[RMDB]
The record gives the reactivity of an RNA of 177 nucleotides to DMS and 2A3. Reactivities are rounded to 0.1 and cut off at 0 and 3.
RNA sequence: GGGAACGACUCGAGUAGAGUCGAAAAGCACCGCCGCAGUGCAGCCAACCCCCGACCGCACACACGCUGCCCGAGCCUGCUACUGUCGCAGUCAUACCCGGUCCGGGGCCGGACCCGGGUAGGCGUAGACCAGUAUCGUAUUCGUACGAUACUGGUCAAAAGAAACAACAACAACAAC
Reactivity to DMS in 0.01 (KOAc 150mM, MgCl2 10mM, bicine 150mM(pH8.5), 24C), signal-to-noise 4, nucleotides 027 to 126: g000c040a090c010c050g020c060c040g000c050a090g010u000g010c040a100g010c040c050a130a200c070c020c010c020c030g010a090c050c050g030c060a050c070a090c120a080c080g000c060u000g010c030c010c030g000a070g020c060c000u000g010c030u000a090c080u000g010u000c100g030c050a110g000u010c030a120u000a040c000c010c010g010g000u000c000c000g010g020g020g040c150c030g010g010a030c080c050c030g030g000g020u000a000g010g000c040g020u000a160
Reactivity to 2A3 in 0.01 (KOAc 150mM, MgCl2 10mM, bicine 150mM(pH8.5), 24C), signal-to-noise 1, nucleotides 027 to 126: g010c000a000c050c030g050c030c020g010c070a010g050u030g040c010a030g060c000c070a070a120c000c000c000c000c000g010a030c040c010g030c000a010c020a000c000a000c070g040c040u030g010c020c000c020g040a020g060c010c020u020g040c040u040a050c040u100g040u100c030g000c050a030g010u050c020a090u030a020c000c010c000g010g000u000c010c020g060g020g200g040c140c030g000g000a010c080c200c010g000g000g010u000a020g000g030c020g020u040a020

2A3 adducts were read by reverse transcription with SuperScript II with manganese. For 2A3, 2,590 sequencing reads were counted.